[RMDB]
RNA sequence: GGGAACGACUCGAGUAGAGUCGAAAAUCUUCACCGCCGCGUCGCUGUUCCUGAUCUUCGCGACGGGCUUCUGGGAUCAGACAGUCGUCACGCUCGGCCUCACGCUGUCGUCGACGAUCGUGAGCCAGUCACCAUCCACUUUCGAGUGGAUGGUGACAAAAGAAACAACAACAACAAC
Reactivity to 2A3 in 0.01 (KOAc 150mM, MgCl2 10mM, bicine 150mM(pH8.5), 24C), signal-to-noise 1, nucleotides 027 to 126: u040c040u160u140c040a070c080c030g050c020c010g190c030g060u000c010g020c060u100g030u030u070c010c050u060g100a200u110c070u150u160c100g040c010g000a000c010g000g000g000c000u030u000c030u000g000g010g050a040u030c010a000g080a150c040a030g060u040c000g010u060c040a000c010g040c060u080c060g020g000c000c030u050c000a120c090g000c040u050g000u070c040g050u020c080g000a020c010g030a090u050c000g030u040g000a020g020c020c000a050
Reactivity to DMS in 0.01 (KOAc 150mM, MgCl2 10mM, bicine 150mM(pH8.5), 24C), signal-to-noise 1, nucleotides 027 to 126: u000c090u000u020c110a170c160c110g000c020c040g030c020g000u000c000g030c090u000g010u000u020c090c050u010g000a120u020c080u020u000c060g030c000g030a040c050g010g000g020c120u000u000c030u000g000g000g000a090u000c010a060g010a160c050a070g010u030c010g000u000c040a070c040g000c140u000c050g000g050c050c030u000c130a130c120g020c150u000g010u000c020g000u000c160g010a080c010g020a000u000c070g030u000g000a080g000c000c050a180
Background:
The data come from the RNA Mapping Database (RMDB), library OK2TST. Structure probing data (2A3 and DMS) for a 177-nucleotide construct. DMS adducts were read by reverse transcription with MarathonRT. The DMS profile rests on 896 reads. The 2A3 profile rests on 1,210 reads. For 2A3 the reverse transcriptase was SuperScript II with manganese.